[RMDB]
Source: RMDB library OK1LIB, as collected in RNAgym.
This 177-nucleotide RNA was probed chemically with 2A3 and DMS.
The RNA was probed in 150 mM KOAc, 10 mM MgCl2 and 150 mM bicine (pH 8.5) at 24 C.
For DMS, 22,258 sequencing reads were counted.
RNA sequence: GGGAACGACUCGAGUAGAGUCGAAAAUAUAUACAAGAAAUCCUGGCAUUGGUCUGUAUGGCAAAGGCAUAAUUCCAUCGGGAAGCAAUUGCACUUCUAACAAAUAAAUCGAUGGGCAAUUGAAGCGCACUAGCAUAUUAUUCGUAAUAUGCUAGUGAAAAGAAACAACAACAACAAC
Reactivity to 2A3 in 0.01 (KOAc 150mM, MgCl2 10mM, bicine 150mM(pH8.5), 24C), signal-to-noise 8, nucleotides 027 to 126: u100a000u050a000u040a050c050a060a060g070a090a130a020u060c010c020u030g030g060c050a070u020u090g050g000u020c020u020g170u090a060u080g100g000c070a110a080a040g080g000c020a030u060a070a060u110u040c020c020a050u120c060g040g010g020a030a020g040c040a020a070u040u030g010c050a030c020u010u020c020u050a090a120c050a130a150a060u250a100a120a050u110c020g010a010u030g020g010g000c010a010a020u030u040g040a120a010g100c050g000
Reactivity to DMS in 0.01 (KOAc 150mM, MgCl2 10mM, bicine 150mM(pH8.5), 24C), signal-to-noise 8, nucleotides 027 to 126: u040a080u040a100u040a090c110a110a110g000a080a120a070u010c010c010u010g010g000c070a070u010u000g010g010u000c050u010g020u000a060u010g000g000c060a040a070a060g010g010c030a050u010a060a110u010u010c020c020a050u030c080g000g000g000a050a080g000c020a030a020u000u000g000c030a040c000u000u000c020u010a100a110c250a060a060a120u030a050a080a100u030c230g000a010u000g000g000g000c050a010a010u000u010g010a070a080g010c120g010